[RMDB]
RNA sequence: GGGAACGACUCGAGUAGAGUCGAAAAAUCAUGACGAAGAAACGACGAGAGCAAGCUGAGAGGCAAGCUGAGAGGCAAGCUCAAAGAAAGGAGCGUCCAACUCCUUACCCUCGUCUUUUAAAAAGAAUCCCACACAAUAGUUCGCUAUUGUGUGGGAAAAAGAAACAACAACAACAAC
Reactivity to DMS in 0.01 (KOAc 150mM, MgCl2 10mM, bicine 150mM(pH8.5), 24C), signal-to-noise 1, nucleotides 027 to 126: a080u000c040a110u010g000a070c120g010a210a160g000a000a040a000c110g040a000c000g000a040g010a010g000c020a050a150g030c060u000g000a210g000a080g070g000c020a100a160g000c010u000g020a160g000a050g000g000c070a060a300g020c020u000c050a000a160a060g000a070a070a020g000g000a020g000c020g000u020c180c140a070a170c000u000c000c000u020u000a040c020c010c020u000c000g040u000c000u000u000u000u000a030a050a040a160a050g020a130a090